[RMDB]
RNA sequence: GGGAACGACUCGAGUAGAGUCGAAAAUUAGAUCCUGCAGGUUGGUUAAUACCUGUAACAAAAGCUAGAACACUAUAUAAACUGGCUAAGUAUGGUUUUGUUACAUCUGGUAUAGCAGGUGCUUUAGGGUAUGUAGAUGAAGAAAGUAUUUUAGAUAGUAGCAAGUAGUAUUCGUACUACUUGCUACAAAAGAAACAACAACAACAAC
Reactivity to 2A3 in 0.01 (KOAc 150mM, MgCl2 10mM, bicine 150mM(pH8.5), 24C), signal-to-noise 2, nucleotides 027 to 156: u030u010a000g040a130u120c030c020u020g000c030a010g090g060u110u070g050g020u100u040a030a010u020a080c020c060u020g000u020a010a000c010a000a060a020a010g040c020u020a020g120a220a030c020a050c130u070a100u050a020u060a220a200a060c030u040g060g060c080u050a040a030g090u050a070u120g010g020u000u000u020u020g040u010u070a050c020a030u060c060u080g000g050u030a010u040a100g020c010a040g030g010u010g020c030u050u080u110a070g050g020g000u090a030u080g040u050a050g010a100u110g000a010a010g040a070a000a030g010u020a090u020u060u050u010a070g020a070u140a080
Reactivity to DMS in 0.01 (KOAc 150mM, MgCl2 10mM, bicine 150mM(pH8.5), 24C), signal-to-noise 2, nucleotides 027 to 156: u010u000a130g000a120u000c030c030u010g050c070a080g010g030u000u010g010g050u000u000a100a110u000a040c000c000u010g020u020a020a060c030a020a070a040a060g030c030u000a100g000a100a190c110a080c060u000a070u010a260u000a100a140a130c120u000g020g020c020u000a070a150g020u000a080u000g000g010u010u000u000u000g020u000u000a020c030a060u010c080u000g050g020u000a070u000a100g060c010a060g010g030u000g010c020u000u000u010a070g010g000g010u000a030u010g010u010a070g030a120u000g000a080a080g010a060a090a110g020u000a020u000u000u010u000a090g000a210u000a130
Annotation
This 207-nucleotide RNA was probed chemically with 2A3 and DMS. 2A3 adducts were read by reverse transcription with SuperScript II with manganese. The RNA was probed in 150 mM KOAc, 10 mM MgCl2 and 150 mM bicine (pH 8.5) at 24 C. For DMS, 3,793 sequencing reads were counted.